An RNA of 177 nucleotides, treated with DMS and 2A3 and read out base by base. As a SHAPE reagent, 2A3 marks flexible, mostly unpaired nucleotides at the ribose 2'-OH. The DMS profile rests on 3,908 reads. It was measured as part of the RMDB library OK1LIB. 2A3 adducts were read by reverse transcription with SuperScript II with manganese.

RNA sequence: GGGAACGACUCGAGUAGAGUCGAAAAGUGCUGCGUCUGCUAGCGGACGGCUUGAGCACGCACCAAGUGGCGGUGCAGCUCAACUAUUGCGAGCGCACGAUCAAGAACAUCGUUCAUGACAUAGUGAUAGGUUCCUAUUGUUCGCAAUAGGAACCUAAAAAGAAACAACAACAACAAC
Reactivity to DMS in 0.01 (KOAc 150mM, MgCl2 10mM, bicine 150mM(pH8.5), 24C), signal-to-noise 3, nucleotides 027 to 126: g000u020g070c020u020g050c040g030u010c070u000g000c010u010a140g030c160g000g000a020c000g000g000c190u020u010g030a000g000c010a130c160g020c040a040c000c020a160a140g030u040g010g000c160g000g020u000g000c000a150g000c000u000c000a050a050c030u020a140u020u050g040c060g010a050g020c010g000c080a020c000g030a060u020c050a070a070g030a030a080c120a150u010c220g000u000u010c000a050u030g040a040c090a040u010a060g000u010g000a210
Reactivity to 2A3 in 0.01 (KOAc 150mM, MgCl2 10mM, bicine 150mM(pH8.5), 24C), signal-to-noise 5, nucleotides 027 to 126: g040u050g020c020u010g040c000g150u060c060u130g000c040u030a040g050c010g030g030a030c040g000g030c010u010u030g040a000g010c000a070c300g020c020a010c000c000a070a020g160u180g210g070c150g000g010u010g000c000a020g010c000u000c000a040a030c040u080a070u110u190g030c030g040a010g020c020g000c010a000c030g020a040u030c050a100a050g020a110a060c030a110u150c100g060u090u070c040a070u120g040a060c000a050u110a020g060u100g100a040